[RMDB]
RNA sequence: GGGAACGACUCGAGUAGAGUCGAAAAGCGAGGUUUCAUCACUGGUCGACGCCACAACACUCACGGUAGCACCAUGUUGCGGCACGGCUGUACCCAAAGUUGGGGUACGAGCUCGUGCGGGCCGCUGCUUCGUAUCCUUAUUCGUAAGGAUACGAAGAAAAGAAACAACAACAACAAC
Reactivity to DMS in 0.01 (KOAc 150mM, MgCl2 10mM, bicine 150mM(pH8.5), 24C), signal-to-noise 9, nucleotides 027 to 126: g010c060g010a080g020g010u000u000u000c060a090u000c060a060c070u000g010g010u000c030g010a110c100g020c030c030a070c090a060a070c110a060c090u000c090a080c090g010g020u000a050g000c110a150c040c050a070u000g010u000u000g020c040g010g010c010a020c010g010g000c000u000g000u000a000c000c000c000a060a120a160g030u010u010g020g000g010g010u000a000c010g000a020g010c010u000c020g020u000g000c040g010g010g010c030c040g010c070u000g000
Reactivity to 2A3 in 0.01 (KOAc 150mM, MgCl2 10mM, bicine 150mM(pH8.5), 24C), signal-to-noise 9, nucleotides 027 to 126: g040c030g030a050g090g040u040u070u120c060a080u050c010a030c070u050g010g030u030c020g050a040c040g010c010c020a040c020a080a050c040a030c040u100c030a080c060g060g020u050a020g040c030a040c030c020a050u130g200u090u240g300c070g040g000c000a000c000g000g000c010u000g000u010a000c000c010c000a090a200a080g300u300u280g080g010g000g000u010a010c050g050a040g000c100u140c220g010u010g010c000g000g050g000c010c010g010c030u040g020